[RMDB]
RNA sequence: GGGAACGACUCGAGUAGAGUCGAAAAAGCUGUGUUUGUAUGAUUUGAAUCGAGGGUGACACUUCAGGCCGAUUGUUAUAGUUGUUUGGUUUGUGGCCUGGUGGCUUUAACAGCGGUGUGUUAUGGCCAAUAUUUAUUAUUUCGAUAAUAAAUAUUGAAAAGAAACAACAACAACAAC
Reactivity to DMS in 0.01 (KOAc 150mM, MgCl2 10mM, bicine 150mM(pH8.5), 24C), signal-to-noise 5, nucleotides 027 to 126: a080g010c040u010g010u010g010u010u010u010g010u010a070u020g000a080u000u010u010g010a070a150u010c040g010a090g010g020g010u000g000a110c090a040c070u010u010c030a020g000g010c010c010g020a090u020u010g010u000u010a080u010a130g010u000u000g000u000u010u010g010g010u010u010u020g020u020g010g000c020c010u000g010g020u010g010g000c010u000u010u010a020a030c050a060g020c060g010g010u010g010u000g000u010u010a040u010g000g000c080
Reactivity to 2A3 in 0.01 (KOAc 150mM, MgCl2 10mM, bicine 150mM(pH8.5), 24C), signal-to-noise 1, nucleotides 027 to 126: a000g060c020u030g000u000g080u070u090u090g090u080a110u100g040a060u020u100u210g090a050a010u090c020g000a090g170g030g000u110g050a010c010a000c020u080u080c000a010g010g000c030c010g040a070u000u090g050u000u130a100u040a110g040u000u000g040u050u030u060g080g040u070u080u060g050u040g070g000c000c000u000g010g000u010g000g000c050u000u020u050a010a000c010a010g020c020g010g020u050g000u000g030u090u020a040u040g030g010c000
Notes:
Structure probing data (DMS and 2A3) for a 177-nucleotide construct. The reactions ran in a buffer of 150 mM KOAc, 10 mM MgCl2 and 150 mM bicine (pH 8.5), at 24 C. Source: RMDB library OK1LIB, as collected in RNAgym. 2A3 adducts were read by reverse transcription with SuperScript II with manganese.